[RMDB]
RNA sequence: GGGAACGACUCGAGUAGAGUCGAAAAAGGCGAAACUGGAGGCGCUGUCGGGGAUCCUCGACGACCACCGGGACGAUCGGGUCAUCGUCUUUACCGCCCACAACGACCUCGCGUACGACGUCAGCGAUGUCUUCGAUAAUUUCGAUUAUCGAAGACAAAAAGAAACAACAACAACAAC
Reactivity to DMS in 0.01 (KOAc 150mM, MgCl2 10mM, bicine 150mM(pH8.5), 24C), signal-to-noise 5, nucleotides 027 to 126: a080g000g020c010g000a040a160a240c080u010g000g000a080g010g000c050g020c040u000g000u000c030g000g000g000g000a120u010c110c020u000c050g010a030c020g010a200c010c040a100c050c040g010g010g010a050c050g000a060u010c140g010g000g010u000c080a180u010c030g010u000c010u010u000u000a070c110c110g000c010c010c020a090c140a060a090c060g000a060c050c070u000c040g010c060g010u000a100c090g000a060c080g010u000c090a130g010c080g010a100
Reactivity to 2A3 in 0.01 (KOAc 150mM, MgCl2 10mM, bicine 150mM(pH8.5), 24C), signal-to-noise 3, nucleotides 027 to 126: a010g030g000c030g030a060a070a030c060u060g040g030a020g040g020c120g000c300u140g030u020c010g000g020g000g050a140u180c060c020u020c010g020a010c000g020a030c010c010a040c010c030g030g010g010a020c040g040a140u190c110g170g000g000u020c020a050u010c000g010u000c000u020u010u030a090c020c030g010c000c010c000a040c030a050a020c040g060a040c010c020u030c030g000c030g040u070a090c040g010a030c040g070u070c050a020g010c030g060a050
Chemical mapping of a 177-nucleotide RNA with DMS and 2A3.
Reactivities are given for positions 27 through 126.
DMS adducts were read by reverse transcription with MarathonRT.
For DMS, 5,260 sequencing reads were counted.